[RMDB]
RNA sequence: GGGAACGACUCGAGUAGAGUCGAAAAGAUAUGGAGCUCUCGGAAGACCAUCGAUCUCGGAAACGAGGGAGGUCCCGAGAGGCUCCUAAGUCAAAGAAACGAUAAUUCUUCGGAAUUAUCGUUUCAACAAGAUAGCAGACUUCGGUCUGCUAUCUUGAAAAGAAACAACAACAACAAC
Reactivity to 2A3 in 0.01 (KOAc 150mM, MgCl2 10mM, bicine 150mM(pH8.5), 24C), signal-to-noise 1, nucleotides 027 to 126: g050a060u060a060u150g000g000a010g010c000u000c000u000c010g050g060a300a150g010a090c010c020a120u300c060g010a070u040c000u020c030g060g000a110a100a040c020g000a010g000g000g010a010g030g000u000c000c000c000g000a000g000a000g020g030c010u000c000c000u000a020a010g040u010c080a240a000a100g010a000a000a000c000g000a010u000a000a020u000u000c010u080u090c290g070g000a010a000u000u000a000u000c010g000u010u010u010c010a010a020
Reactivity to DMS in 0.01 (KOAc 150mM, MgCl2 10mM, bicine 150mM(pH8.5), 24C), signal-to-noise 3, nucleotides 027 to 126: g000a060u010a300u020g000g000a000g010c000u000c000u000c010g000g000a130a140g020a000c010c000a300u000c150g000a070u000c010u010c000g000g010a130a100a170c000g030a010g000g010g000a010g020g000u010c010c000c000g000a030g010a020g000g000c010u000c000c010u000a030a080g010u000c050a070a160a130g000a000a000a010c000g000a010u000a000a000u000u000c000u010u020c230g020g010a020a000u010u000a000u000c000g010u000u000u000c000a150a160

Background:
The data come from the RNA Mapping Database (RMDB), library TTRDEL. An RNA of 177 nucleotides, treated with 2A3 and DMS and read out base by base. The RNA was probed in 150 mM KOAc, 10 mM MgCl2 and 150 mM bicine (pH 8.5) at 24 C. For 2A3 the reverse transcriptase was SuperScript II with manganese.